[RMDB]
RNA sequence: GGGAACGACUCGAGUAGAGUCGAAAACAAGCCAGUUCGCUGGCUUGAAAAACCGUAGGACUCCGUAGCUUUUGACGCGAAGCCACUUCGAAAGAGGUGGAAUUCGCGAUAAGCUACAGGAGUCCUAAACGGAAAAAGUUAGGUUUCGACCUAACAACGACAUAUUACUAUUCGUAGUAAUAUGUCGAAAAGAAACAACAACAACAAC
Reactivity to DMS in 0.01 (KOAc 150mM, MgCl2 10mM, bicine 150mM(pH8.5), 24C), signal-to-noise 2, nucleotides 027 to 156: c010a030a020g010c000c000a040g050u000u000c300g060c000u000g010g060c000u020u000g000a030a100a060a080a180c030c010g020u000a020g020g010a010c000u000c000c000g030u000a000g010c000u000u000u000u000g010a210c050g000c000g010a030a020g000c000c020a010c000u000u000c020g010a190a170a250g000a030g000g020u000g000g010a010a050u000u010c020g010c000g010a030u000a010a030g010c000u010a000c000a030g070g020a010g000u000c000c000u000a000a020a090c000g020g000a070a070a070a120a140g030u000u000a000g010g030u000u000u010c260g010a060c000c000u010a000a020c030a050a210
Reactivity to 2A3 in 0.01 (KOAc 150mM, MgCl2 10mM, bicine 150mM(pH8.5), 24C), signal-to-noise 2, nucleotides 027 to 156: c000a010a000g000c010c010a010g030u070u140c230g080c130u010g000g010c000u010u000g010a030a000a000a000a000c000c000g000u020a030g000g010a010c000u010c000c000g020u000a000g000c010u100u050u060u090g200a090c030g010c000g000a000a000g050c000c000a000c010u010u000c000g080a120a030a110g030a000g040g000u000g010g000a070a180u010u030c000g000c010g010a010u010a020a000g000c000u020a000c000a000g000g000a000g000u000c000c000u000a000a000a000c010g020g050a040a090a160a000a050g010u010u010a020g000g060u060u150u190c300g110a160c000c020u000a000a000c000a000a020
Chemical mapping of a 207-nucleotide RNA with DMS and 2A3. Conditions: 150 mM KOAc, 10 mM MgCl2 and 150 mM bicine (pH 8.5), 24 C. The 2A3 profile rests on 2,109 reads. For DMS, 6,278 sequencing reads were counted. In probing experiments dimethyl sulfate is read out at A N1 and C N3, which are open when not base-paired.